[RMDB]
RNA sequence: GGGAACGACUCGAGUAGAGUCGAAAAUUGAUGUCGAAAGGUGUGGCAGCGUUGCGGCAAUAAUUUGUCAGGCGAUAUUCCCUAGCCACCGAAUAACGUGUAACGCUUGUGCUAGAGAAUUUGAACACGGUCAUAUUAAGUUCGCUUAAUAUGACCGAAAAGAAACAACAACAACAAC
Reactivity to DMS in 0.01 (KOAc 150mM, MgCl2 10mM, bicine 150mM(pH8.5), 24C), signal-to-noise 8, nucleotides 027 to 126: u010u010g010a100u010g020u010c030g000a050a080a060g020g010u000g020u010g010g020c050a100g000c030g010u000u000g010c020g010g010c020a040a070u020a080a110u010u000u000g020u000c050a150g010g020c020g000a170u000a120u000u000c000c000c000u000a300g010c020c020a080c140c050g000a090a080u020a080a090c090g000u000g010u000a040a070c050g010c040u000u000g010u010g010c010u010a060g000a110g010a110a100u000u000u000g010a050a100c200a160
Reactivity to 2A3 in 0.01 (KOAc 150mM, MgCl2 10mM, bicine 150mM(pH8.5), 24C), signal-to-noise 5, nucleotides 027 to 126: u090u080g060a040u110g040u100c040g030a050a040a070g060g020u050g000u030g120g010c010a010g010c010g030u050u050g000c030g030g000c020a010a040u210a200a110u060u070u060g040u030c040a040g000g000c010g000a010u020a080u170u030c010c000c000u000a010g000c000c000a010c020c010g040a100a060u140a130a050c060g050u050g020u060a030a010c010g000c000u060u140g080u060g040c020u050a010g020a010g030a160a150u140u110u170g050a070a000c060a020
This 177-nucleotide RNA was probed chemically with DMS and 2A3.
The RNA was probed in 150 mM KOAc, 10 mM MgCl2 and 150 mM bicine (pH 8.5) at 24 C.
For 2A3, 6,785 sequencing reads were counted.
For DMS, 11,165 sequencing reads were counted.
For DMS the reverse transcriptase was MarathonRT.